[RMDB]
RNA sequence: GGGAACGACUCGAGUAGAGUCGAAAAUAAAAAUCCCAGCUGCCAUACCCACCAUCGACAGGAGUAUGAACGUGGCCACUGACACAACUACUACAGUCAUAGUGGGAUUCAGCUCAUAACACAAAAAUACUACGUAGACGUUCGCGUCUACGUAGUAAAAAGAAACAACAACAACAAC
Reactivity to DMS in 0.01 (KOAc 150mM, MgCl2 10mM, bicine 150mM(pH8.5), 24C), signal-to-noise 1, nucleotides 027 to 126: u000a020a090a090a170a060u000c000c000c000a120g040c050u020g010c100c220a090u000a160c010c020c000a050c040c010a050u000c160g000a030c070a120g000g000a040g030u000a020u010g010a030a080c170g000u010g000g010c050c190a090c050u060g000a060c070a000c020a050a130c040u000a060c000u000a060c000a080g010u000c000a040u000a040g000u000g020g010g010a100u000u000c020a010g020c010u000c150a040u000a050a010c170a050c030a000a120a040a080a090
Reactivity to 2A3 in 0.01 (KOAc 150mM, MgCl2 10mM, bicine 150mM(pH8.5), 24C), signal-to-noise 2, nucleotides 027 to 126: u090a000a080a010a000a000u020c010c010c000a000g000c000u000g000c020c030a150u190a300c000c000c000a000c020c030a020u030c050g030a010c020a020g060g030a010g030u020a050u280g120a160a020c120g000u000g010g040c090c020a230c170u110g070a040c000a020c000a050a060c020u050a000c010u040a030c010a010g000u020c000a020u030a020g010u010g050g000g000a000u080u010c000a010g000c020u000c050a170u180a130a040c090a000c040a060a020a000a020a090

The record gives the reactivity of an RNA of 177 nucleotides to DMS and 2A3. Reactivities are given for positions 27 through 126. The data come from the RNA Mapping Database (RMDB), library M2PK90.